Conditions: 150 mM KOAc, 10 mM MgCl2 and 150 mM bicine (pH 8.5), 24 C. Structure probing data (DMS and 2A3) for a 177-nucleotide construct. High 2A3 reactivity points to a flexible backbone, as in loops and unpaired stretches. It was measured as part of the RMDB library OK2TRN. For DMS, 973 sequencing reads were counted.
RNA sequence: GGGAACGACUCGAGUAGAGUCGAAAAGUGCACAGUGACCUCUUCAGUGAGUGGAGAAGUGUGUGUUCACUGAGAGGCACCACACGGCUGGACAGCACCUGUCUGAGUACCUGCCACCAUCUCCACAAGUGCCUCACCUAUUCGUAGGUGAGGCACUAAAAGAAACAACAACAACAAC
Reactivity to DMS in 0.01 (KOAc 150mM, MgCl2 10mM, bicine 150mM(pH8.5), 24C), signal-to-noise 1, nucleotides 027 to 126: g030u000g020c110a080c090a040g030u000g000a130c000c000u000c010u000u000c040a000g020u000g000a090g000u000g010g000a130g000a030a140g020u000g010u020g000u000g000u000u000c050a040c020u000g000a010g000a030g000g020c000a050c040c060a090c030a060c080g020g000c020u000g000g060a050c040a060g000c160a090c110c000u000g000u000c030u000g010a140g030u020a020c080c030u000g020c150c000a100c040c060a100u010c030u000c030c040a030c220a040
Reactivity to 2A3 in 0.01 (KOAc 150mM, MgCl2 10mM, bicine 150mM(pH8.5), 24C), signal-to-noise 1, nucleotides 027 to 126: g060u050g000c100a030c030a110g020u150g160a300c010c000u040c000u120u060c010a040g030u030g070a000g000u090g070g100a140g000a080a150g120u150g060u040g040u030g060u280u040c000a000c000u020g000a010g000a020g000g010c020a020c010c000a050c000a000c000g000g000c010u030g020g020a000c010a020g000c030a020c070c020u060g030u010c070u040g100a010g090u050a080c020c000u010g010c000c010a030c030c010a070u010c010u000c000c040a050c000a050